Source information: The record gives the reactivity of an RNA of 177 nucleotides to DMS. For DMS the reverse transcriptase was MarathonRT. The reactions ran in a buffer of 150 mM KOAc, 10 mM MgCl2 and 150 mM bicine (pH 8.5), at 24 C. The DMS profile rests on 543 reads.

RNA sequence: GGGAACGACUCGAGUAGAGUCGAAAAUUACUAGUCUGUGAUGAAUUGCUUUGACUUCUGACACCUCGUAUGAAUACUGCACGUGCAGUCUGAUUAUUUAGCAAGACUGAGGCUUAAAAUAAAUCAACUGAUAAGGGGGGUUCGCCCCCCUUAUCAGAAAAGAAACAACAACAACAAC
Reactivity to DMS in 0.01 (KOAc 150mM, MgCl2 10mM, bicine 150mM(pH8.5), 24C), signal-to-noise 1, nucleotides 027 to 126: u010u020a120c080u000a110g010u020c030u000g010u000g000a120u020g000a140a110u000u000g000c040u010u000u010g030a050c080u010u000c030u000g030a070c110a030c010c020u010c110g000u010a030u010g020a090a090u020a050c070u010g010c050a080c220g020u010g010c010a030g010u010c140u000g050a070u000u000a040u000u000u000a030g010c030a050a090g040a090c100u020g000a050g010g010c060u000u010a060a090a040a070u000a020a020a190u000c070a070a200